Chemical mapping of a 207-nucleotide RNA with DMS and 2A3.
Conditions: 150 mM KOAc, 10 mM MgCl2 and 150 mM bicine (pH 8.5), 24 C.
It was measured as part of the RMDB library ARCHII.
The 2A3 profile rests on 2,607 reads.
For DMS, 1,992 sequencing reads were counted.
RNA sequence: GGGAACGACUCGAGUAGAGUCGAAAACGGGGGACCACCAGGUUGCCUAAGGAGGGGUGAACCGGCCCAGGUCGGAAACGGAGCAGGUCAAAACUCCCGUGCUGAUCAGUAGUGGGAUCGCGCCUGUGAAUAGCCACUGCACUCCAGCCUGGGCAACGAUAGGUAAAUCGUUCGCGAUUUACCUAUCAAAAGAAACAACAACAACAAC
Reactivity to DMS in 0.01 (KOAc 150mM, MgCl2 10mM, bicine 150mM(pH8.5), 24C), signal-to-noise 1, nucleotides 027 to 156: c020g000g010g030g060g010a080c040c060a060c040c050a050g020g000u000u000g020c030c040u010a020a060g010g020a160g030g030g020g000u000g000a170a060c020c000g000g020c030c010c050a110g020g020u000c030g040g000a100a090a040c060g000g020a300g020c000a050g010g040u000c090a140a100a090a110c060u000c020c010c000g040u000g030c010u000g000a100u000c130a140g060u010a090g010u000g000g010g020a090u000c020g000c040g000c010c040u000g070u000g020a090a110u000a080g010c030c050a090c020u000g050c010a100c040u000c020c010a060g000c010c040u020g000g000g020c000a000a000c050
Reactivity to 2A3 in 0.01 (KOAc 150mM, MgCl2 10mM, bicine 150mM(pH8.5), 24C), signal-to-noise 3, nucleotides 027 to 156: c010g000g000g000g000g010a010c000c020a020c010c010a020g090g000u040u020g030c010c010u070a090a060g040g010a020g000g030g000g000u020g050a050a070c030c010g040g020c000c020c020a030g040g030u060c040g010g020a090a080a020c050g020g010a030g010c030a030g060g000u090c060a030a040a060a130c050u020c020c000c000g020u030g010c040u090g050a210u090c090a040g030u070a030g040u090g020g000g030a030u040c050g020c020g010c020c030u030g020u020g040a090a110u120a070g010c010c010a040c060u100g010c010a010c030u000c000c010a040g000c020c000u000g000g000g000c010a000a010c000